Source: RMDB library M2PK50, as collected in RNAgym.
This 177-nucleotide RNA was probed chemically with DMS and 2A3.
Conditions: 150 mM KOAc, 10 mM MgCl2 and 150 mM bicine (pH 8.5), 24 C.
RNA sequence: GGGAACGACUCGAGUAGAGUCGAAAAUACGCGAGGUUCGCCUCGCGUAAAAGAGGAGCGUAAACGUGAGCGUACGUAGUGCUGUACAUCGUUCGUACACGAAUGCACAUGGUUUCGACCAUGUGAACACAUUUACUACGUUCGCGUAGUAAAUGUGAAAAGAAACAACAACAACAAC
Reactivity to DMS in 0.01 (KOAc 150mM, MgCl2 10mM, bicine 150mM(pH8.5), 24C), signal-to-noise 9, nucleotides 027 to 126: u000a010c000g020c000g010a010g010g020u000u010c240g020c000c000u000c000g010c000g010u000a000a020a080a110g010a090g010g000a080g010c070g010u000a040a060a090c040g010u000g010a300g010c050g020u000a020c050g010u000a120g010u010g010c140u010g010u010a100c050a130u000c040g010u000u000c030g010u000a110c070a040c040g000a070a080u010g000c010a010c000a000u000g000g000u000u000u010c210g010a030c000c000a010u000g000u000g010a060a150
Reactivity to 2A3 in 0.01 (KOAc 150mM, MgCl2 10mM, bicine 150mM(pH8.5), 24C), signal-to-noise 9, nucleotides 027 to 126: u050a000c000g000c000g000a000g010g030u060u100c180g080c060c000u000c000g000c000g000u000a000a000a000a010g130a030g080g050a050g030c080g070u150a080a070a060c020g010u020g030a050g030c010g020u020a010c020g020u040a040g040u070g120c150u130g070u120a020c010a070u050c040g040u060u020c020g010u040a030c030a000c040g070a100a050u180g020c010a010c000a010u000g000g020u030u100u140c170g040a020c000c000a000u010g000u000g010a020a000